Structure probing data (2A3 and DMS) for a 177-nucleotide construct. The 2A3 profile rests on 2,097 reads. The reactions ran in a buffer of 150 mM KOAc, 10 mM MgCl2 and 150 mM bicine (pH 8.5), at 24 C. It was measured as part of the RMDB library OK2TRN.
RNA sequence: GGGAACGACUCGAGUAGAGUCGAAAACGCGGUACAGAUGGCCGUCGCCGAAAUGCGCCCAGAUCGCGUUGUCGAUCCGGCCCGCGUACGCGGUGACGCGUAUGUUCGCGUAGCGCGCGAGCGUCGAGCUCACGCGUCGAUUCGUCGACGCGUGAGCAAAAGAAACAACAACAACAAC
Reactivity to 2A3 in 0.01 (KOAc 150mM, MgCl2 10mM, bicine 150mM(pH8.5), 24C), signal-to-noise 1, nucleotides 027 to 126: c010g000c000g000g040u200a030c010a030g040a110u070g190g070c080c040g000u000c000g000c000c000g020a040a050a020u090g000c020g030c010c030c000a010g010a000u000c000g010c100g170u140u300g170u300c000g010a000u000c000c020g020g000c000c080c010g000c020g020u000a030c110g000c000g000g050u040g000a010c000g000c000g020u040a040u100g050u020u010c000g000c000g000u030a030g020c050g000c010g000c010g040a060g000c000g020u090c050g020a030
Reactivity to DMS in 0.01 (KOAc 150mM, MgCl2 10mM, bicine 150mM(pH8.5), 24C), signal-to-noise 1, nucleotides 027 to 126: c020g020c010g020g040u030a020c020a070g000a050u010g010g000c100c040g010u010c000g030c010c010g000a030a010a060u000g020c020g000c300c000c010a020g000a030u010c000g000c020g010u020u000g010u010c000g010a010u000c010c060g010g000c160c060c060g000c000g020u000a020c290g000c030g000g020u000g020a030c010g000c050g010u010a040u010g020u000u000c000g000c000g010u000a080g020c040g000c000g010c170g000a060g000c030g000u000c090g010a170